[RMDB]
RNA sequence: GGGAACGACUCGAGUAGAGUCGAAAACAUAGUCUCACAAGGUUCUAAUGACACAUGCGCAAGGUGGUUAGGGUACAGCUUGGUUUUAUACAUUUUAGGGAGACAUGAGACAUCAGUCAACAUGUGUAAGAUGUACAUUGAUUCUAUCCAGAAAGGCUAGCAUUCUCUUUUUCGAAAGAGAAUGCUAAAAAGAAACAACAACAACAAC
Reactivity to 2A3 in 0.01 (KOAc 150mM, MgCl2 10mM, bicine 150mM(pH8.5), 24C), signal-to-noise 5, nucleotides 027 to 156: c020a050u140a050g050u020c020u020c030a030c020a000a030g040g020u050u020c020u070a100a100u190g040a030c020a020c030a110u140g050c010g000c050a040a030g020g010u020g010g020u040u030a030g030g010g010u060a110c020a010g040c050u040u050g010g040u080u050u010u070a050u030a020c010a040u020u080u070u150a070g040g040g000a110g020a010c020a050u040g000a010g010a040c050a090u130c040a060g090u030c010a020a050c010a130u030g030u000g010u040a030a000g010a030u030g010u050a040c020a070u020u050g010a020u080u030c040u060a050u010c020c000a010g030a020a020a000g040g010c010
Reactivity to DMS in 0.01 (KOAc 150mM, MgCl2 10mM, bicine 150mM(pH8.5), 24C), signal-to-noise 4, nucleotides 027 to 156: c030a140u000a160g000u010c020u000c040a080c030a050a050g010g010u000u000c040u000a080a130u010g010a110c060a070c030a050u000g030c060g010c030a050a050g000g040u000g020g000u000u000a080g020g010g040u000a040c040a060g020c070u000u000g020g010u000u010u000u000a100u010a060c030a050u010u000u000u020a090g000g030g020a190g020a060c050a060u010g000a300g030a100c050a100u020c090a130g010u000c030a070a060c060a050u000g030u010g010u000a040a050g000a060u000g020u000a040c030a080u000u010g010a080u010u000c050u000a080u000c030c010a080g010a030a040a040g030g010c050